[RMDB]
RNA sequence: GGGAACGACUCGAGUAGAGUCGAAAACCAAAAUAUACACGAAAGCAUCGUUGUAAAUACAUGAUUUUAGGUGUAUGAUUAGGGUGUAUAUUAAAUGGUUUUGAAAAGAGGUGCUUUUUAGUCAUGACAAGUAGAGACUAUUCGUAGUCUCUACUUGAAAAGAAACAACAACAACAAC
Reactivity to DMS in 0.01 (KOAc 150mM, MgCl2 10mM, bicine 150mM(pH8.5), 24C), signal-to-noise 9, nucleotides 027 to 126: c000c000a050a080a040a010u000a000u000a010c000a010c000g010a110a080a110g010c070a030u010c050g010u020u010g010u010a080a080a030u000a050c050a040u010g010a120u020u020u020u020a080g010g010u000g010u010a010u000g000a100u010u010a100g010g010g010u000g000u000a010u000a010u000u000a060a080a110u010g000g010u000u000u000u010g010a050a050a060a060g010a120g010g020u000g000c020u000u000u010u010u010a080g010u000c050a050u010g000a300
Reactivity to 2A3 in 0.01 (KOAc 150mM, MgCl2 10mM, bicine 150mM(pH8.5), 24C), signal-to-noise 9, nucleotides 027 to 126: c000c000a080a060a040a010u010a000u010a000c000a000c010g130a160a040a010g040c030a030u030c040g120u090u170g100u200a040a100a030u090a020c050a030u080g170a230u140u120u090u200a120g100g020u020g030u040a040u060g130a130u060u140a060g070g100g020u000g000u000a000u000a000u000u050a040a100a080u060g000g030u030u050u050u170g110a050a060a020a010g100a030g020g050u050g020c010u020u090u050u090u150a050g020u070c050a050u060g040a030